RNA sequence: GGGAACGACUCGAGUAGAGUCGAAAAAGGCUAAUAGUAGGGCCUGGGCUUUCUGUGUUAAAUGCCAUAAUGAUAUAUUGGCAGCAACAGACCCCAGUGAGGCUUUCGAGAAAUUCGUAAGUCUCUUAUCUAGUCUAAUGUUCGCAUUAGACUAGAUAAAAGAAACAACAACAACAAC
Reactivity to DMS in 0.01 (KOAc 150mM, MgCl2 10mM, bicine 150mM(pH8.5), 24C), signal-to-noise 3, nucleotides 027 to 126: a040g000g000c000u000a110a080u000a120g000u010a110g010g010g020c040c020u000g000g020g020c120u020u000u000c010u000g000u010g010u010u000a060a070a130u010g000c010c000a020u000a080a090u000g010a200u020a180u000a120u010u000g010g020c000a010g000c140a070a020c000a010g000a070c300c000c010c070a090g000u010g010a010g020g000c000u010u010u000c010g000a010g000a140a100a140u000u000c000g010u000a000a010g010u000c000u000c000u000u010
Reactivity to 2A3 in 0.01 (KOAc 150mM, MgCl2 10mM, bicine 150mM(pH8.5), 24C), signal-to-noise 2, nucleotides 027 to 126: a030g050g000c020u040a070a080u050a300g180u040a090g090g010g060c030c010u020g000g020g000c040u060u220u040c010u010g050u010g020u070u190a060a170a080u070g000c000c000a010u070a070a070u160g140a030u060a040u040a010u230u070g010g000c010a010g020c000a030a000c010a010g030a030c010c000c000c000a040g040u050g060a010g010g000c000u010u020u020c020g010a010g030a080a300a120u120u000c000g000u000a000a000g000u000c000u010c050u030u000
This 177-nucleotide RNA was probed chemically with DMS and 2A3. DMS adducts were read by reverse transcription with MarathonRT.